Record summary: Structure probing data (2A3 and DMS) for a 177-nucleotide construct. For DMS, 1,341 sequencing reads were counted. Reactivities are rounded to 0.1 and cut off at 0 and 3. For 2A3 the reverse transcriptase was SuperScript II with manganese. DMS adducts were read by reverse transcription with MarathonRT. The 2A3 profile rests on 1,127 reads. Source: RMDB library OK2TRN, as collected in RNAgym.
RNA sequence: GGGAACGACUCGAGUAGAGUCGAAAAUGCGACCGCUACGGCGUGCUGCAUUGCGCCGAACGCGGCUUCGUCGACCUGCUGCUCGGCGCCUGGCCGGGCUGGACCGGUCCGCAGUUGCCGGAGGAAAAGCUCGCUAAUCAUUCGUGAUUAGCGAGCUAAAAGAAACAACAACAACAAC
Reactivity to 2A3 in 0.01 (KOAc 150mM, MgCl2 10mM, bicine 150mM(pH8.5), 24C), signal-to-noise 1, nucleotides 027 to 126: u160g020c010g040a060c020c020g050c030u030a050c030g050g020c020g060u090g000c080u040g060c010a120u100u230g000c000g000c000c000g000a060a000c100g000c050g030g020c000u050u010c000g030u030c000g030a150c000c020u120g070c030u020g000c000u050c000g000g000c000g050c020c050u100g110g000c010c010g000g000g030c040u060g080g000a050c000c010g000g000u000c000c080g050c070a090g040u110u090g000c000c010g020g060a090g040g070a050a050a050
Reactivity to DMS in 0.01 (KOAc 150mM, MgCl2 10mM, bicine 150mM(pH8.5), 24C), signal-to-noise 2, nucleotides 027 to 126: u010g040c050g000a080c010c010g020c030u000a300c020g000g010c010g010u010g030c120u010g000c040a170u010u010g010c020g000c000c000g000a060a130c260g000c000g000g000c070u010u010c060g010u010c070g000a040c050c020u000g010c050u000g040c020u000c000g020g010c000g010c110c160u030g000g020c000c000g000g000g050c070u010g000g020a040c040c030g000g000u000c020c160g030c040a020g020u000u000g000c060c000g000g000a200g010g000a070a070a070